[RMDB]
RNA sequence: GGGAACGACUCGAGUAGAGUCGAAAAGAUAUGGAGCGUUGCUUUUGACGCUCAAACACUCGGAAACGAGUGGUAGAGCGAUAAGCACCGCUCCUAAGUCAAAGGUCGGAGCUUCGGCUCCGACCAACUACCCCAUAUACUUCGGUAUAUGGGGUAGAAAAGAAACAACAACAACAAC
Reactivity to DMS in 0.01 (KOAc 150mM, MgCl2 10mM, bicine 150mM(pH8.5), 24C), signal-to-noise 2, nucleotides 027 to 126: g000a030u000a300u010g010g030a000g000c000g000u000u000g010c020u000u010u000u010g020a200c050g000c010u000c000a030a110a210c000a020c000u000c020g010g000a080a070a190c000g020a010g000u000g020g000u020a190g000a030g020c000g010a130u000a010a010g000c000a030c070c000g020c000u000c000c000u000a020a040g000u000c030a070a120a120g020g010u000c030g030g000a030g010c000u000u000c280g030g000c030u000c000c020g020a000c000c000a030a020
Reactivity to 2A3 in 0.01 (KOAc 150mM, MgCl2 10mM, bicine 150mM(pH8.5), 24C), signal-to-noise 2, nucleotides 027 to 126: g020a030u080a040u150g010g010a000g020c010g030u010u000g020c000u060u070u080u270g210a100c080g000c000u000c000a020a070a030c000a010c000u000c000g020g020a030a080a090c010g010a020g000u010g020g020u050a020g000a000g000c010g050a070u040a050a010g000c000a000c000c000g010c000u010c000c010u000a010a020g020u000c020a100a080a110g030g010u000c000g000g000a000g040c010u130u160c300g070g000c000u000c000c000g020a000c000c000a000a000